[RMDB]
RNA sequence: GGGAACGACUCGAGUAGAGUCGAAAACAAUGAUGAGCAAUUCGCUAUUGCCGCCUAAAAACGGUUAGCCGGGGCUGCUAGAGCCUUGUUACCAAAGAUAGCCGGCGAGGACUUCGGUCCCCGUCGUUGAAGGGCUGUACGUUCGCGUACAGCCCAAGGAGAGUAUAUUGUUCGCAAUAUACUCUCCAAAAGAAACAACAACAACAAC
Reactivity to 2A3 in 0.01 (KOAc 150mM, MgCl2 10mM, bicine 150mM(pH8.5), 24C), signal-to-noise 4, nucleotides 027 to 156: c030a030a130u200g050a060u090g030a080g070c050a060a160u190u180c020g000c020u050a030u060u180g020c010c000g040c000c020u080a080a040a010a000a010c020g010g020u060u030a010g010c000c020g010g000g000g000c020u050g000c000u040a020g000a010g070c000c000u010u040g050u050u090a050c020c020a030a020a000g050a080u010a010g020c000c000g030g000c010g000a010g000g000a000c010u060u060c180g080g000u010c000c000c000c000g000u000c000g000u010u040g050a060a040g000g000g000c000u000g000u000a000c000g010u000u060c220g000c010g040u000a000c010a000g000c000c000c000a000a000
Reactivity to DMS in 0.01 (KOAc 150mM, MgCl2 10mM, bicine 150mM(pH8.5), 24C), signal-to-noise 1, nucleotides 027 to 156: c090a090a140u030g010a140u010g020a150g050c010a040a140u000u000c100g040c030u000a050u000u000g020c020c010g000c010c050u050a100a110a150a160a050c010g020g010u010u000a060g030c010c040g020g000g010g010c010u090g010c070u000a110g020a120g020c020c000u000u000g010u010u040a170c030c050a080a050a080g040a300u000a070g000c060c000g010g000c010g000a020g040g010a000c000u010u000c300g030g040u010c000c030c000c010g020u000c020g000u030u010g010a040a150g000g190g060c000u030g000u010a020c010g020u030u010c300g000c020g070u000a010c000a010g000c040c110c000a000a050
The record gives the reactivity of an RNA of 207 nucleotides to 2A3 and DMS. The 2A3 profile rests on 3,310 reads. For DMS the reverse transcriptase was MarathonRT. For 2A3 the reverse transcriptase was SuperScript II with manganese. Conditions: 150 mM KOAc, 10 mM MgCl2 and 150 mM bicine (pH 8.5), 24 C.